Conditions: 150 mM KOAc, 10 mM MgCl2 and 150 mM bicine (pH 8.5), 24 C. Chemical mapping of a 207-nucleotide RNA with 2A3. Values cover nucleotides 27 to 156. It was measured as part of the RMDB library OK3TST.

[RMDB]
RNA sequence: GGGAACGACUCGAGUAGAGUCGAAAACUGGCCAGCAGAAGUAGAAGUCCCGGACGCAAAAAUCCACUCCAGACAAAAAGAAUUUUAUUGGCCUUCACUUAACGCUCAUAAAUUUGUCUGCCGCAAAAUCUGCGAGACAAGACCAGAACAGAAGACAGGAUGACUACUAUUUCGAUAGUAGUCAUCCAAAAGAAACAACAACAACAAC
Reactivity to 2A3 in 0.01 (KOAc 150mM, MgCl2 10mM, bicine 150mM(pH8.5), 24C), signal-to-noise 1, nucleotides 027 to 156: c070u000g000g000c010c060a000g100c000a030g060a300a030g010u150a040g040a050a000g060u060c120c010c050g090g010a100c050g000c010a000a000a000a000a300u010c010c000a090c000u020c010c010a000g000a000c060a040a140a040a000a000g030a070a100u120u130u050u090a180u080u190g000g000c000c000u030u000c070a090c030u040u080a190a000c030g010c030u000c010a040u100a060a050a100u080u000u000g000u000c000u000g130c030c010g080c000a090a190a000a190u160c070u010g000c000g010a020g000a000c000a000a000g010a000c000c000a030g000a100a100c090a010g170a120a000g070a170c090a030